The data come from the RNA Mapping Database (RMDB), libraries RFM100 and RFMREP. This 177-nucleotide RNA was probed chemically with DMS and 2A3.

[RMDB]
RNA sequence: GGGAACGACUCGAGUAGAGUCGAAAACAGAUCCUGCGCCGUUACUUCAAGCGGAUCCUGCCCAGGCCGCUGACCCUGAUCGAGGAUCCCAUGAGCCAGCUCAACCGCCUGAUGCAGUGGGAUAUGAAAGGUAAAUAUGGUUCGCCAUAUUUACCUUAAAAGAAACAACAACAACAAC
Reactivity to DMS in 0.01 (KOAc 150mM, MgCl2 10mM, bicine 150mM(pH8.5), 24C), signal-to-noise 9, nucleotides 027 to 126: c130a130g010a080u010c020c020u010g020c060g010c040c030g000u010u020a060c100u010u020c100a080a050g020c040g010g000a070u020c030c020u000g010c060c040c040a140g010g000c030c020g010c020u000g000a090c060c020c020u010g010a080u010c070g010a100g010g000a080u000c010c010c020a050u010g010a230g000c020c030a050g000c030u010c100a090a120c090c090g010c140c030u010g010a060u020g010c030a250g020u010g000g000g000a050u020a040u010g010a090
Reactivity to 2A3 in 0.01 (KOAc 150mM, MgCl2 10mM, bicine 150mM(pH8.5), 24C), signal-to-noise 9, nucleotides 027 to 126: c040a010g040a070u020c000c010u030g020c010g010c010c020g090u100u150a110c030u090u110c070a100a020g020c030g040g020a060u050c000c020u040g020c010c010c000a000g030g000c010c010g020c040u050g060a110c010c000c010u040g020a080u070c060g050a050g040g040a030u020c000c000c000a040u060g010a020g030c010c010a010g000c020u040c060a060a100c050c040g060c020c020u060g020a060u100g020c010a010g020u030g020g020g020a020u030a040u100g160a100
The reactions ran in a buffer of 150 mM KOAc, 10 mM MgCl2 and 150 mM bicine (pH 8.5), at 24 C.